[RMDB]
RNA sequence: GGGAACGACUCGAGUAGAGUCGAAAAUGGAGCCUGGCUCCCUGUGGUAAGCCAGGCUUGCAGAGGUGGCUCCUGACAUCAAUCCGCGGGCAUGUGGCUGCUGCGGGAGGCACACACUGGCUCAGGAAUUCUAUCUCCUGUUCGCAGGAGAUAGAAUAAAAGAAACAACAACAACAAC
Reactivity to 2A3 in 0.01 (KOAc 150mM, MgCl2 10mM, bicine 150mM(pH8.5), 24C), signal-to-noise 4, nucleotides 027 to 126: u050g070g010a000g010c010c000u000g020g020c010u050c030c010c070u260g210u300g130g070u130a060a010g010c010c000a000g010g000c000u010u020g000c000a020g010a040g020g050u020g020g060c010u030c010c020u050g070a100c000a020u030c010a010a120u040c010c000g010c070g030g070g070c150a110u270g020u040g070g020c000u010g000c010u010g010c030g020g020g000a000g010g050c020a010c000a010c000a000c110u020g020g040c010u020c090a040g070g120a050
Reactivity to DMS in 0.01 (KOAc 150mM, MgCl2 10mM, bicine 150mM(pH8.5), 24C), signal-to-noise 6, nucleotides 027 to 126: u010g010g000a020g000c010c000u000g000g010c010u010c070c020c090u000g020u020g030g020u000a090a060g020c010c010a010g010g010c000u000u000g010c030a040g010a140g010g030u000g010g020c020u000c020c020u010g000a150c020a030u000c060a080a140u010c020c020g020c030g000g010g030c210a100u010g020u010g010g020c300u000g010c100u000g010c010g010g000g010a030g010g000c010a050c030a050c080a080c060u000g000g000c030u000c050a100g010g000a170